[RMDB]
RNA sequence: GGGAACGACUCGAGUAGAGUCGAAAAGGCGGGCCUCCCCGCAUUGCAAAGUAGCCAACCUGGUCAGGUCCGGAAGGAAGCAGCCACAACUAUUGAAGCAAGUGCCGGGGGUUGGGCUCGCCAAACCUAUGAACAUAACUUCGGUUAUGUUCAUAGGCGUUGUCACGAAGUUCGCUUCGUGACAACGAAAAGAAACAACAACAACAAC
Reactivity to 2A3 in 0.01 (KOAc 150mM, MgCl2 10mM, bicine 150mM(pH8.5), 24C), signal-to-noise 2, nucleotides 027 to 156: g010g000c000g000g000g000c000c010u300c040c020c000c000g060c000a000u000u000g010c010a050a000a080g010u020a010g030c080c120a030a090c010c040u040g000g030u160c000a000g000g030u020c010c010g100g100a020a110g020g000a020a000g020c020a010g010c000c000a020c020a050a040c000u010a030u040u050g030a180a060g020c010a040a010g140u040g160c190c060g020g000g000g010g030u070u190g030g000g000c000u010c000g000c000c000a010a000a000c000c000u000a000u000g000a000a000c000a000u000a000a000c000u020u050c150g060g000u000u000a000u010g000u010u000c000a000u000a000g000g000
Reactivity to DMS in 0.01 (KOAc 150mM, MgCl2 10mM, bicine 150mM(pH8.5), 24C), signal-to-noise 1, nucleotides 027 to 156: g010g000c000g040g030g040c020c040u000c000c010c000c060g000c020a010u010u000g030c030a100a260a210g010u000a030g000c040c080a150a300c010c070u000g000g040u000c040a300g010g010u000c000c040g050g050a230a150g020g030a060a040g000c060a300g050c010c000a090c120a090a050c010u000a060u000u000g010a200a250g020c000a010a050g000u010g020c040c110g050g020g010g000g010u000u000g070g040g000c010u000c030g040c000c000a000a030a010c000c000u000a020u000g000a000a030c010a020u000a010a020c000u000u000c290g010g000u000u000a000u000g000u000u000c010a000u000a010g010g060
The record gives the reactivity of an RNA of 207 nucleotides to 2A3 and DMS. The reactions ran in a buffer of 150 mM KOAc, 10 mM MgCl2 and 150 mM bicine (pH 8.5), at 24 C. Values cover nucleotides 27 to 156. For 2A3 the reverse transcriptase was SuperScript II with manganese.